Structure probing data (DMS and 2A3) for a 207-nucleotide construct. For 2A3 the reverse transcriptase was SuperScript II with manganese. For DMS the reverse transcriptase was MarathonRT.
RNA sequence: GGGAACGACUCGAGUAGAGUCGAAAACAGAGGCUCAGAUAGACAAAAAGCAGGUUGGAAGACGAACCGAGAGGUGAUGCCACCGGUCGCGUCUCACUCGAAGAGCCAGGAGAAGGUAAAAGAAGAAGGGACGAUCGAUGGUGUUUCGAAGCAAGAAGCUUAAUUAACAGUUCGCUGUUAAUUAAGCAAAAGAAACAACAACAACAAC
Reactivity to DMS in 0.01 (KOAc 150mM, MgCl2 10mM, bicine 150mM(pH8.5), 24C), signal-to-noise 1, nucleotides 027 to 156: c070a090g010a100g020g090c030u010c020a120g000a240u000a080g030a180c020a070a080a080a130a060g020c050a030g000g020u000u000g040g020a130a090g010a060c040g020a020a020c120c010g020a120g000a060g050g030u010g020a030u020g000c040c020a050c020c030g030g020u000c020g000c040g040u000c010u000c010a070c080u020c110g010a060a050g020a060g020c010c000a040g040g000a090g010a030a060g020g000u000a020a040a050a130g010a040a060g000a050a030g020g010g010a020c020g040a050u010c000g000a090u000g020g020u020g000u010u020u010c010g000a050a080g020c090a100a050g010a100a290
Reactivity to 2A3 in 0.01 (KOAc 150mM, MgCl2 10mM, bicine 150mM(pH8.5), 24C), signal-to-noise 4, nucleotides 027 to 156: c030a010g060a050g050g010c020u030c040a010g060a150u130a070g110a100c040a050a160a020a020a000g060c050a050g040g040u100u080g050g040a050a010g010a040c050g020a030a020c030c010g020a020g010a010g080g030u100g050a090u170g060c030c010a030c000c040g050g010u070c070g010c000g120u000c010u010c030a060c020u040c020g080a090a070g010a040g080c010c000a010g020g010a060g010a050a020g050g010u130a060a100a020a090g090a020a000g010a010a040g000g020g010a020c050g020a030u070c020g010a030u050g010g000u010g030u040u020u030c030g000a050a000g040c130a090a050g090a060a000